[RMDB]
RNA sequence: GGGAACGACUCGAGUAGAGUCGAAAACUCGGUCUCUCAGAGGACGAUAUGCAGGAGAUGAAGGCGACGGUCGAGGAGUUCAUCCAGAAGGAGGAUUGAUCUCUUGCUCUACACGGAAAGCAAGCAAUAUCUCAUCGACAAGCUGAAAGCGGCGGGCGCAUACAUGCAGAUUCGUCUGCAUGUAUGCAAAAGAAACAACAACAACAAC
Reactivity to 2A3 in 0.01 (KOAc 150mM, MgCl2 10mM, bicine 150mM(pH8.5), 24C), signal-to-noise 2, nucleotides 027 to 156: c030u020c030g000g070u030c040u000c000u010c030a020g050a080g120g010a050c040g040a070u080a050u300g050c030a000g010g080a060g000a020u090g050a030a060g110g000c050g000a040c130g060g090u030c050g040a020g040g000a030g020u040u070c060a100u060c020c000a010g050a110a060g050g050a010g000g030a050u030u090g040a040u050c030u000c000u020u060g020c000u000c030u030a150c170a040c030g000g110a020a120a000g030c020a010a000g000c020a030a000u050a080u140c030u000c000a090u010c010g020a030c030a100a030g020c020u050g020a100a050a000g030c040g030g000c060g030g010g020c020